The record gives the reactivity of an RNA of 170 nucleotides to DMS and 2A3. 2A3 adducts were read by reverse transcription with SuperScript II with manganese. The reactions ran in a buffer of 150 mM KOAc, 10 mM MgCl2 and 150 mM bicine (pH 8.5), at 24 C.

RNA sequence: GGGAACGACUCGAGUAGAGUCGAAAACUAUAAAGAGGAGACUGCUGGACUCGCCGCCCGAGCCCGAGCAUGGGCCCCAGUUCCGAACGAAGAGACCGCCGGGGAAGGGGGGCGAACCGACGGGAGUAUACUCCCCCGUUCGCGGGGGAGAAAAGAAACAACAACAACAAC
Reactivity to DMS in 0.01 (KOAc 150mM, MgCl2 10mM, bicine 150mM(pH8.5), 24C), signal-to-noise 4, nucleotides 027 to 129: c170u030a110u090a080a060a030g010a080g010g000a140g020a050c040u010g110c040u050g060g090a130c110u020c080g020c030c000g040c020c020c050g000a300g060c030c000c000g020a120g000c080a090u070g010g030g010c020c000c000c040a110g000u060u020c060c130g000a100a110c080g070a080a040g010a070g030a110c000c000g060c110c090g020g020g000g000a050a220g040g010g010g010g050g030c030g000a110a030c010c030g020a070c100g090g010g060a150g020u000a130u050a060
Reactivity to 2A3 in 0.01 (KOAc 150mM, MgCl2 10mM, bicine 150mM(pH8.5), 24C), signal-to-noise 3, nucleotides 027 to 129: c030u100a100u210a220a190a020g050a040g070g010a000g010a050c010u010g030c000u040g030g040a050c000u000c050g010c000c000g140c020c000c010g010a050g070c010c000c030g070a090g010c030a050u130g030g020g000c010c000c000c000a000g030u050u020c070c080g020a050a020c030g010a010a070g010a020g060a090c010c010g040c000c000g000g000g000g000a020a020g010g000g000g000g000g000c000g000a020a000c020c030g050a030c000g020g010g000a000g010u040a010u000a110